[RMDB]
RNA sequence: GGGAACGACUCGAGUAGAGUCGAAAAGCUGCGGGGUUCCGGUGCAAUGACCCCGUCUGGGACGUUGAUGUCAAGUUCGCACACCUGUAUCGCCGUGUCCCGGGCGAUUGGAGUGAGCACAACGAACCGAUCCUGGUAUGUUCGCAUACCAGGAUCGAAAAGAAACAACAACAACAAC
Reactivity to DMS in 0.01 (KOAc 150mM, MgCl2 10mM, bicine 150mM(pH8.5), 24C), signal-to-noise 1, nucleotides 027 to 126: g000c160u000g000c030g000g010g030g000u030u010c140c150g000g040u000g000c080a180a090u010g020a030c040c020c020c000g020u000c070u000g000g010g030a060c020g020u000u010g010a140u030g020u000c080a150a130g030u010u010c030g000c080a100c030a030c010c010u000g010u000a030u000c000g020c020c010g010u010g000u000c040c000c000g000g010g000c000g000a010u000u020g010g010a140g020u000g000a080g020c060a090c080a100a120c020g010a020a130c090